[RMDB]
RNA sequence: GGGAACGACUCGAGUAGAGUCGAAAAGAUAUGGAGCAUACUAACGGGAGUAAGAUCAUCGGAAACGAUGACUUACGAAGAACGUUAGUUAUUGCUCCUAAGUCAAAGUAACACUUCGGUGUUACAACUACUUGUCACCCUUCGGGGUGACAAGUAGAAAAGAAACAACAACAACAAC
Reactivity to 2A3 in 0.01 (KOAc 150mM, MgCl2 10mM, bicine 150mM(pH8.5), 24C), signal-to-noise 1, nucleotides 027 to 126: g060a000u060a030u240g000g010a020g020c000a100u060a140c010u000a020a000c020g000g030g020a080g040u000a010a030g060a300u020c000a000u000c000g010g040a110a050a030c030g000a010u010g000a000c030u000u100a000c000g020a060a000g040a020a000c010g000u000u000a020g000u040u020a080u040u200g000c030u010c010c000u030a030a010g000u000c000a000a020a140g010u000a020a000c000a010c000u040u150c300g120g010u010g010u030u000a000c000a020a010
Reactivity to DMS in 0.01 (KOAc 150mM, MgCl2 10mM, bicine 150mM(pH8.5), 24C), signal-to-noise 1, nucleotides 027 to 126: g000a030u000a300u000g000g010a000g060c000a050u000a090c000u000a000a030c000g000g000g000a070g010u000a000a000g030a240u000c000a010u000c010g070g000a140a100a170c010g050a030u000g000a020c000u000u000a000c010g000a150a180g000a170a100c000g010u000u000a050g000u010u000a010u000u010g010c000u000c010c000u000a010a090g000u000c080a140a020a170g020u000a000a000c000a000c000u000u010c300g030g010u000g000u000u020a000c000a050a260
The record gives the reactivity of an RNA of 177 nucleotides to 2A3 and DMS. High 2A3 reactivity points to a flexible backbone, as in loops and unpaired stretches. The data come from the RNA Mapping Database (RMDB), library TTRDES.